[RMDB]
RNA sequence: GGGAACGACUCGAGUAGAGUCGAAAAGUUCCCUCUUAGCGUGGAGGUUUAACUACGCUCGUUCCCCAUAUCGGUGUGGGCGCACCGGAUUUAUCAAUCAAAGUCCUUUAGGGAACGGAAAGGAACAAAAAUCCAUGGGAGUUCGCUCCCAUGGAAAGUAUAUAUCCAACUUCGGUUGGAUAUAUACAAAAGAAACAACAACAACAAC
Reactivity to DMS in 0.01 (KOAc 150mM, MgCl2 10mM, bicine 150mM(pH8.5), 24C), signal-to-noise 3, nucleotides 027 to 156: g000u010u010c000c000c010u010c110u000u000a030g020c020g050u000g010g010a160g010g010u010u000u000a110a100c010u020a020c010g000c040u010c000g000u000u000c020c000c010c060a170u000a070u010c040g050g030u000g030u000g010g020g050c110g020c020a030c000c020g000g020a060u010u000u000a110u010c090a080a130u000c160a100a070a140g000u010c000c010u000u010u010a100g020g020g010a030a050c040g010g010a050a070a080g010g010a060a100c030a010a070a090a150a190u000c000c000a020u000g000g020g010a030g020u000u000c300g020c000u000c010c000c000a000u000g000g000a000a010a030
Reactivity to 2A3 in 0.01 (KOAc 150mM, MgCl2 10mM, bicine 150mM(pH8.5), 24C), signal-to-noise 3, nucleotides 027 to 156: g020u010u000c000c000c000u000c010u000u070a000g010c000g010u000g010g030a060g040g100u100u220u160a080a060c030u030a000c000g000c000u000c010g000u000u000c000c010c010c000a060u080a030u140c000g000g000u000g010u030g030g020g000c070g000c020a000c010c000g000g000a010u050u230u160a180u170c080a130a000u020c040a010a040a170g030u010c010c000u030u050u120a050g020g000g020a040a010c030g010g010a080a050a020g050g010a030a010c030a080a080a050a000a040u000c000c000a000u000g000g000g000a010g010u030u040c050g020c060u010c010c000c010a000u000g000g000a000a000a010